[RMDB]
RNA sequence: GGGAACGACUCGAGUAGAGUCGAAAACGCCGGGGAUACGAGCCGUCUUGUCGACACCCAGCCCGACGUACGGCGCGUAGAGCCACGAGAAGUCGAUGACGUAGCUGGAUGGUUGGCCUCCCUGGUCACAAUACGGAUGUUUCGACAUCCGUAUUGUAAAAGAAACAACAACAACAAC
Reactivity to 2A3 in 0.01 (KOAc 150mM, MgCl2 10mM, bicine 150mM(pH8.5), 24C), signal-to-noise 5, nucleotides 027 to 126: c050g000c010c000g000g030g000g000a030u040a110c010g010a010g020c000c000g010u010c080u090u260g050u040c010g020a020c010a090c090c030c010a020g040c000c040c020g020a010c010g010u060a020c010g000g010c020g000c010g000u030a070g030a040g100c040c000a030c040g090a090g040a170a030g030u060c060g090a160u210g040a050c080g060u060a030g030c030u040g080g040a110u060g140g030u180u090g030g000c010c020u030c010c000c000u020g000g010u030c020
Reactivity to DMS in 0.01 (KOAc 150mM, MgCl2 10mM, bicine 150mM(pH8.5), 24C), signal-to-noise 7, nucleotides 027 to 126: c130g010c010c000g010g020g010g010a300u000a030c020g010a040g010c000c000g000u000c070u000u010g010u000c010g000a090c110a130c070c060c070a110g000c080c070c020g010a020c020g000u000a040c030g010g010c040g010c020g010u000a040g010a140g000c000c030a060c070g000a100g010a120a140g010u000c030g000a120u020g000a070c060g010u010a110g000c070u000g010g010a090u010g000g000u010u000g010g010c030c140u000c020c010c010u000g000g010u010c130
Structure probing data (2A3 and DMS) for a 177-nucleotide construct. The data come from the RNA Mapping Database (RMDB), library OK2TRN. 2A3 adducts were read by reverse transcription with SuperScript II with manganese. The reactions ran in a buffer of 150 mM KOAc, 10 mM MgCl2 and 150 mM bicine (pH 8.5), at 24 C.